[RMDB]
RNA sequence: GGGAACGACUCGAGUAGAGUCGAAAAACCGGCGGUAAAUCAACUCAGUUGAAAGCCGCGAGCGCUUUGAGUGCGAACUCAAAGGACAGCAGAUCCGGUGUAAUUCCGGGGCCGACGGUUAGAGUCCAAAAGAGGUUAUCGUUCGCGAUAACCUCAAGAUGGAAGAAUAGUUCGCUAUUCUUCCAUCAAAAGAAACAACAACAACAAC
Reactivity to DMS in 0.01 (KOAc 150mM, MgCl2 10mM, bicine 150mM(pH8.5), 24C), signal-to-noise 1, nucleotides 027 to 156: a010c000c000g000g000c000g000g010u000a020a160a200u000c030a050a110c020u000c050a120g020u000u010g000a040a200a240g000c050c030g000c030g010a100g000c050g000c020u000u000u030g000a000g020u020g010c300g040a190a030c020u010c000a010a000a020g000g020a100c010a200g010c010a090g000a150u000c050c000g030g020u000g010u020a210a300u000u000c000c000g020g000g000g000c000c010g010a070c020g000g000u010u000a160g020a250g020u000c030c030a090a040a060a200g020a040g000g000u000u000a020u000c010g000u000u000c280g010c020g040a020u000a010a010c000c000u000c000a020a060
Reactivity to 2A3 in 0.01 (KOAc 150mM, MgCl2 10mM, bicine 150mM(pH8.5), 24C), signal-to-noise 2, nucleotides 027 to 156: a010c020c010g050g000c020g020g000u040a190a180a180u060c020a020a030c060u110c300a160g020u020u030g030a090a050a020g060c030c040g020c030g030a030g000c020g030c010u010u030u020g010a010g000u080g060c050g090a140a010c000u000c010a010a010a000g030g050a080c040a060g030c000a020g020a120u010c000c000g000g010u010g020u060a060a050u070u040c020c010g000g000g000g020c030c000g000a020c010g020g000u000u040a010g030a030g150u020c010c000a000a090a000a100g000a000g000g000u010u000a000u000c010g020u040u080c160g020c000g060a000u010a000a000c020c030u000c000a010a000